[RMDB]
RNA sequence: GGGAACGACUCGAGUAGAGUCGAAAAACUAGUAUGUACAGGGGUGAGUUGACCUGUCUUCUAGACUGCUGACCAUCAACUCACCGGUCAGCUGGAUGAUGUCCACAGAGUACGACAUCAGUACUCAGUGUAUUGACUACUUCGGUGGUCGAUACACAAAAGAAACAACAACAACAAC
Reactivity to 2A3 in 0.01 (KOAc 150mM, MgCl2 10mM, bicine 150mM(pH8.5), 24C), signal-to-noise 9, nucleotides 027 to 126: a000c010u010a010g060u130a100u110g070u090a010c000a010g060g030g040g040u100g060a110g040u040u040g070a060c000c010u010g010u000c000u010u000c010u000a020g010a120c030u030g010c010u010g010a010c010c000a070u080c020a030a080c040u030c080a040c030c030g000g000u000c000a000g010c010u020g020g020a050u100g010a030u080g070u030c010c020a060c060a080g030a010g020u020a010c030g050a020c080a140u090c030a050g010u010a010c010u010c020a000
Reactivity to DMS in 0.01 (KOAc 150mM, MgCl2 10mM, bicine 150mM(pH8.5), 24C), signal-to-noise 8, nucleotides 027 to 126: a190c010u000a020g010u030a030u000g020u060a010c010a030g000g000g000g010u020g010a060g020u000u000g000a070c040c030u000g000u000c010u000u010c030u020a010g010a120c050u000g000c020u000g010a030c040c090a150u020c100a030a030c070u020c060a060c130c070g000g000u000c010a020g000c000u010g000g010a140u010g010a090u010g000u000c020c040a130c200a110g000a040g010u000a020c050g010a150c180a100u030c100a090g000u000a010c000u000c020a140
Chemical mapping of a 177-nucleotide RNA with 2A3 and DMS. For DMS the reverse transcriptase was MarathonRT. Source: RMDB library OK1LIB, as collected in RNAgym. 2A3 is a SHAPE reagent: it acylates the 2'-hydroxyl of flexible nucleotides of all four kinds.